[RMDB]
RNA sequence: GGGAACGACUCGAGUAGAGUCGAAAAUUUGGCUCAAGUCAUUACAUUUUAAACAAAGGGUAUAGUACAAAACUGAUUAGCAAAACAAUCCAUACAAUAGGGAUGUGGCGCCAUUUUAGAAUCUCCCUAACCAGAGCUGAUUUGGCUUUCAAUGUCACAUCACCGGACGAUUCGUCGUCCGGUGAUGAAAAGAAACAACAACAACAAC
Reactivity to 2A3 in 0.01 (KOAc 150mM, MgCl2 10mM, bicine 150mM(pH8.5), 24C), signal-to-noise 2, nucleotides 027 to 156: u110u110u080g050g000c000u020c030a050a040g020u020c060a120u070u220a040c060a140u110u240u200u300a110a120a030c070a020a140a000g000g000g000u040a050u000a110g000u040a160c080a060a180a020a000c000u020g040a040u040u100a000g010c030a000a000a020a220c040a090a090u020c020c020a090u100a150c090a070a300u070a140g160g000g000a030u000g030u010g050g010c010g000c000c030a020u010u000u040u030a080g010a070a130u000c000u030c150c000c000u000a030a000c030c000a000g000a020g010c000u000g070a100u010u000u100g000g000c010u060u160u260c120a180a130u180g030u010c010a000